Record summary:
The record gives the reactivity of an RNA of 177 nucleotides to DMS and 2A3.

RNA sequence: GGGAACGACUCGAGUAGAGUCGAAAAAAAAAGAUAUGGAAGCAUGACAUGCUUGGAGAGACGAAUAGGUGUCGGAAACGACACCUACUAUCUUGACAAGCAACAGCAUGCUUCCUAAGUCAAAAAACCAUAAUGUUACCUUCGGGUAACAUUAUGGAAAAGAAACAACAACAACAAC
Reactivity to DMS in 0.01 (KOAc 150mM, MgCl2 10mM, bicine 150mM(pH8.5), 24C), signal-to-noise 3, nucleotides 027 to 126: a050a050a070a130a030g020a030u000a300u020g000g010a020a000g010c000a000u000g000a070c080a190u000g010c000u020u000g010g000a300g010a020g050a020c080g000a080a040u000a000g000g010u000g000u000c000g000g010a080a080a160c000g020a000c000a000c000c000u010a000c030u010a180u000c000u000u010g010a300c000a000a020g010c010a030a060c300a210g000c000a030u000g000c000u000u000c000c000u000a020a090g010u010c010a000a090a060a070a080a130
Reactivity to 2A3 in 0.01 (KOAc 150mM, MgCl2 10mM, bicine 150mM(pH8.5), 24C), signal-to-noise 2, nucleotides 027 to 126: a000a000a020a010a010g080a040u120a060u120g000g000a000a010g000c010a020u010g150a240c030a090u090g010c000u000u010g020g000a070g000a000g000a020c100g080a300a300u010a030g000g020u010g000u030c010g030g000a050a080a020c000g010a000c000a000c000c000u000a000c000u000a000u010c000u000u020g020a020c000a000a000g020c000a010a000c000a020g000c000a000u000g000c000u000u010c000c000u000a010a000g000u000c030a000a060a070a080a090a060

For 2A3, 5,190 sequencing reads were counted. The reactions ran in a buffer of 150 mM KOAc, 10 mM MgCl2 and 150 mM bicine (pH 8.5), at 24 C. The data come from the RNA Mapping Database (RMDB), library TTRDES.